[RMDB]
RNA sequence: GGGAACGACUCGAGUAGAGUCGAAAACGACCUGGAAGGUGAACACGUGCUUGGCCAGCUCGUAGAGCGCGGCACGCAGCCUCUCGGGGAGCUGCCUGGGAUACUGGGUCAUGGCGACCAGGAACACGGAGAAUCCGAAAUUCGUUUCGGAUUCUCCAAAAGAAACAACAACAACAAC
Reactivity to DMS in 0.01 (KOAc 150mM, MgCl2 10mM, bicine 150mM(pH8.5), 24C), signal-to-noise 1, nucleotides 027 to 126: c080g010a160c030c000u000g000g020a060a070g000g020u020g010a110a150c130a120c050g010u000g000c020u010u030g050g020c060c170a170g010c050u000c040g000u000a050g010a040g000c040g010c050g000g000c040a010c030g010c090a230g000c000c000u010c010u000c000g020g000g000g000a230g000c070u000g000c050c010u000g020g020g000a090u000a040c060u020g020g000g010u030c050a070u030g000g020c120g000a120c000c000a040g000g000a140a050c160a060c110
Reactivity to 2A3 in 0.01 (KOAc 150mM, MgCl2 10mM, bicine 150mM(pH8.5), 24C), signal-to-noise 1, nucleotides 027 to 126: c010g070a020c000c010u010g000g020a010a010g030g030u100g060a100a010c040a010c170g020u000g020c010u090u290g200g000c060c150a120g020c020u010c050g300u180a090g000a000g000c040g010c030g000g010c000a010c010g000c000a000g020c000c000u000c010u000c030g000g010g010g040a060g000c030u040g000c000c000u000g000g030g000a050u090a130c020u050g040g050g180u150c060a040u160g170g000c060g040a010c000c010a030g050g050a020a000c100a000c010
Structure probing data (DMS and 2A3) for a 177-nucleotide construct. For 2A3, 843 sequencing reads were counted. For DMS the reverse transcriptase was MarathonRT. The RNA was probed in 150 mM KOAc, 10 mM MgCl2 and 150 mM bicine (pH 8.5) at 24 C. 2A3 adducts were read by reverse transcription with SuperScript II with manganese. Source: RMDB library OK2TST, as collected in RNAgym.